[RMDB]
Structure probing data (2A3) for a 207-nucleotide construct. The reactions ran in a buffer of 150 mM KOAc, 10 mM MgCl2 and 150 mM bicine (pH 8.5), at 24 C. Source: RMDB library VIROID, as collected in RNAgym. The 2A3 profile rests on 764 reads. Values are in units of 0.01, from 0 to 300, in steps of 10.

RNA sequence: GGGAACGACUCGAGUAGAGUCGAAAAUGUAAAGAGGAGACUGCUGGACUCGCCGCCCAAGUUCGAGCAUGAGCCAAUUCCGAGCGAGGAUCCCUCGGGGGAAGGAUCAGCGCCCGAGAGGGGAUUGGUGCUAAAGAGCAUUGGAACGCCAAGGAGACAAAGUCUUUGUGUUCGCACAAAGACUUUGAAAAGAAACAACAACAACAAC
Reactivity to 2A3 in 0.01 (KOAc 150mM, MgCl2 10mM, bicine 150mM(pH8.5), 24C), signal-to-noise 1, nucleotides 027 to 156: u130g000u030a060a080a020g020a070g060g010a030g000a090c040u010g110c010u020g040g000a050c020u060c070g040c060c020g010c010c030c000a060a020g000u000u050c010g030a020g000c110a090u110g040a010g000c010c010a010a040u070u000c030c020g000a010g010c030g010a030g020g050a050u060c000c010c010u160c210g000g000g000g000g000a030a010g000g030a030u010c000a010g030c000g070c000c060c150g150a100g030a050g060g050g020g010a000u020u120g000g030u060g000c000u040a120a100a040g070a010g000c020a050u000u140g010g000a050a000c010g020c090c020a040a040g090g000a030g000a000

For 2A3 the reverse transcriptase was SuperScript II with manganese.